RNA sequence: GGGAACGACUCGAGUAGAGUCGAAAACAGAGCUAAUGAGCCACAUACCUACCCAAGGUGAAAGCUCCUUCUCUCGCAAUGUGUAACUCAUGAUUCUCAUGACCCUUGGUUGGAGAGAUCCGGACUAUAGACUAGAGGGUGUUCGCACCCUCUAGAACAUCACCGUAGACUUCGGUCUACGGUGAUGAAAAGAAACAACAACAACAAC
Reactivity to DMS in 0.01 (KOAc 150mM, MgCl2 10mM, bicine 150mM(pH8.5), 24C), signal-to-noise 1, nucleotides 027 to 156: c050a190g000a080g060c130u030a080a100u000g000a120g050c020c060a130c050a120u010a030c030c040u000a080c050c080c020a130a050g060g000u030g000a130a160a150g010c070u000c000c040u000u000c020u000c020u030c000g040c030a050a030u000g020u000g000u000a060a060c050u000c010a110u000g000a180u000u010c070u010c010a090u010g000a080c050c010c010u030u010g030g010u000u020g010g020a040g010a060g000a040u000c070c080g000g000a140c050u000a120u010a220g000a160c030u000a030g010a010g000g010g080u000g030u000u000c300g050c030a040c000c010c000u010c000u000a010g020a040a100
Reactivity to 2A3 in 0.01 (KOAc 150mM, MgCl2 10mM, bicine 150mM(pH8.5), 24C), signal-to-noise 2, nucleotides 027 to 156: c040a020g050a010g010c050u130a150a130u180g080a120g030c070c000a120c020a090u210a040c020c010u020a040c000c000c010a030a030g000g010u030g050a160a050a010g020c030u030c000c040u100u000c030u000c010u000c010g070c100a030a020u060g100u030g030u170a060a060c020u000c030a000u030g070a200u300u070c120u040c070a020u090g010a040c030c000c000u010u080g100g010u020u090g040g000a010g000a010g000a010u030c080c100g010g010a020c060u070a110u140a250g140a070c000u000a000g000a000g000g010g010u000g030u010u060c100g050c040a000c000c000c000u000c000u000a000g000a000a000